[RMDB]
RNA sequence: GGGAACGACUCGAGUAGAGUCGAAAAACCUAUUUUUUAGUCCGCAUCUUGCAAGAUAAGACUGGCGACUUUAUGUCUACAAUUAUUACUUCCUGCCAAACUGCUGUUAGUAAGCUUCUAGAUACAUUAACGUCGUACUUCGGUACGACGAAAAGAAACAACAACAACAAC
Reactivity to DMS in 0.01 (KOAc 150mM, MgCl2 10mM, bicine 150mM(pH8.5), 24C), signal-to-noise 4, nucleotides 027 to 129: a040c010c000u040a060u000u050u040u070u020u070a130g010u040c040c070g040c100a160u010c030u020u000g000c070a120a080g020a090u060a140a070g020a070c080u000g020g000c080g000a000c050u000u060u020a040u040g010u000c030u050a110c140a050a060u050u050a190u000u100a070c060u030u000c020c010u050g040c050c110a050a100a080c210u020g030c020u020g060u030u000a040g030u050a050a060g030c100u000u050c060u000a070g010a100u040a000c240a090u050u000a120a080
Reactivity to 2A3 in 0.01 (KOAc 150mM, MgCl2 10mM, bicine 150mM(pH8.5), 24C), signal-to-noise 5, nucleotides 027 to 129: a000c010c000u000a140u050u080u020u000u020u070a000g000u070c110c060g010c020a000u030c010u020u050g040c050a040a010g030a110u170a050a040g030a050c070u060g070g020c010g000a030c000u080u110u080a090u130g030u000c020u020a030c070a120a090u070u100a040u140u030a120c020u040u040c010c000u010g030c010c010a120a120a010c060u100g040c000u030g010u020u020a020g030u010a050a000g000c000u030u040c050u020a020g010a070u060a110c060a070u080u130a070a010